[RMDB]
RNA sequence: GGGAACGACUCGAGUAGAGUCGAAAAGAUAUGGACUAUGAAGAACUCCCCACCUCUGAAAUCGGAAACGAUUUGAGAGAGGUUUGGAGUCCUAAGUCAAACCAUCGAAACUUCGGUUUCGAUGGAACUACGUAGAUUCCUUCGGGAAUCUACGUAGAAAAGAAACAACAACAACAAC
Reactivity to 2A3 in 0.01 (KOAc 150mM, MgCl2 10mM, bicine 150mM(pH8.5), 24C), signal-to-noise 2, nucleotides 027 to 126: g140a060u220a150u270g110g000a020c010u030a120u300g080a130a230g020a100a020c020u040c010c000c040c030a020c010c020u010c010u070g060a000a000a000u000c010g000g020a080a040a000c030g010a030u050u060u230g110a170g000a000g000a010g040g110u010u020u050g000g010a000g000u030c000c050u010a050a020g000u000c070a030a090a060c020c010a010u020c010g060a020a000a000c000u080u080c280g110g000u000u010u030c010g000a010u000g020g030a000a010
Reactivity to DMS in 0.01 (KOAc 150mM, MgCl2 10mM, bicine 150mM(pH8.5), 24C), signal-to-noise 1, nucleotides 027 to 126: g000a160u000a130u010g020g000a070c010u000a150u010g000a150a050g000a090a030c050u000c010c010c020c090a190c020c000u010c010u010g000a020a010a010u000c000g000g000a170a060a170c020g000a010u000u020u000g020a150g000a030g020a060g000g010u000u010u000g000g010a010g020u000c010c000u000a030a090g010u000c020a020a100a200c020c000a010u000c000g020a010a010a010c000u000u010c210g040g000u000u000u000c000g000a000u020g010g000a010a060